[RMDB]
An RNA of 207 nucleotides, treated with 2A3 and DMS and read out base by base.
Conditions: 150 mM KOAc, 10 mM MgCl2 and 150 mM bicine (pH 8.5), 24 C.
Source: RMDB library OK3TST, as collected in RNAgym.
The DMS profile rests on 2,797 reads.
The 2A3 profile rests on 988 reads.

RNA sequence: GGGAACGACUCGAGUAGAGUCGAAAAAUUUUGUAGUAACUCUUCUGAUCCAGGCUCUAGUGCUGACGCAUUCAUUGCUAUGGGUUCUACCUCUGCCGCUGUUUAUUGCUUUGCCAAUUCCACUUUCGGUAAUGUGACAUCACUUGAUUUCAUCGGCCAAAGUCAGUUGAUUCGUCAACUGACUUUGAAAAGAAACAACAACAACAAC
Reactivity to 2A3 in 0.01 (KOAc 150mM, MgCl2 10mM, bicine 150mM(pH8.5), 24C), signal-to-noise 2, nucleotides 027 to 156: a000u210u190u080u160g050u020a100g030u050a090a090c030u040c000u180u040c070u150g030a070u000c000c020a020g040g050c010u010c040u110a040g020u050g050c060u080g100a080c150g000c030a020u060u010c030a030u030u120g000c030u090a190u140g020g030g000u100u000c010u010a040c010c020u020c090u050g000c000c040g050c050u020g060u140u120u070a120u080u110g040c000u040u050u040g010c010c030a080a050u100u100c020c060a100c080u070u130u120c050g020g000u040a080a020u080g020u040g050a070c040a090u080c010a030c080u050u030g000a040u080u030u070c050a080u020c050g040g050c030
Reactivity to DMS in 0.01 (KOAc 150mM, MgCl2 10mM, bicine 150mM(pH8.5), 24C), signal-to-noise 1, nucleotides 027 to 156: a150u000u000u000u010g020u010a110g040u000a050a070c050u010c030u000u000c020u000g010a080u000c000c020a140g010g030c010u000c030u000a160g010u010g000c020u000g020a120c210g010c060a070u000u000c050a110u000u000g030c030u010a120u000g040g010g040u010u000c040u000a110c040c030u000c110u010g020c020c000g000c030u000g010u010u000u000a060u010u000g010c030u000u000u010g010c040c030a040a110u010u000c030c020a110c110u000u010u000c040g000g010u010a040a020u020g010u010g050a090c100a070u000c040a050c070u000u000g020a060u000u010u000c020a080u010c040g010g020c080